This 207-nucleotide RNA was probed chemically with 2A3. Reactivities are given for positions 27 through 156. The RNA was probed in 150 mM KOAc, 10 mM MgCl2 and 150 mM bicine (pH 8.5) at 24 C.
[RMDB]
RNA sequence: GGGAACGACUCGAGUAGAGUCGAAAAGAUGGGUCCGAUGGAUUAAUGCGUCGCCUGCCAUUGGAUCCUGAUUGAUAGAUUGAUGGCGACGGUCGGAUCACUCGGUAAUUCGGUGCUCAACGAGUGAUCCGUGAUGAUAGUUAAGAUGAGCACCUAAGAGUGACUGAUACUUCGGUAUCAGUCACUCAAAAGAAACAACAACAACAAC
Reactivity to 2A3 in 0.01 (KOAc 150mM, MgCl2 10mM, bicine 150mM(pH8.5), 24C), signal-to-noise 1, nucleotides 027 to 156: g140a080u130g000g000g050u030c000c040g000a000u000g000g000a020u070u190a300a120u240g110c020g000u000c000g000c000c000u000g000c000c000a000u000u000g000g010a000u000c000c000u000g000a000u050u140g000a000u000a170g090a080u030u270g150a210u110g000g000c000g000a000c000g000g000u000c010g000g000a000u000c000a000c000u000c000g010g010u120a070a040u110u100c030g040g000u000g000c000u020c000a070a030c000g000a000g000u000g000a000u010c000c000g000u070g070a100u010g000a070u040a150g270u170u090a240a070g040a090u050g010a010g000c010a000c000c000u000a090a010
The 2A3 profile rests on 458 reads.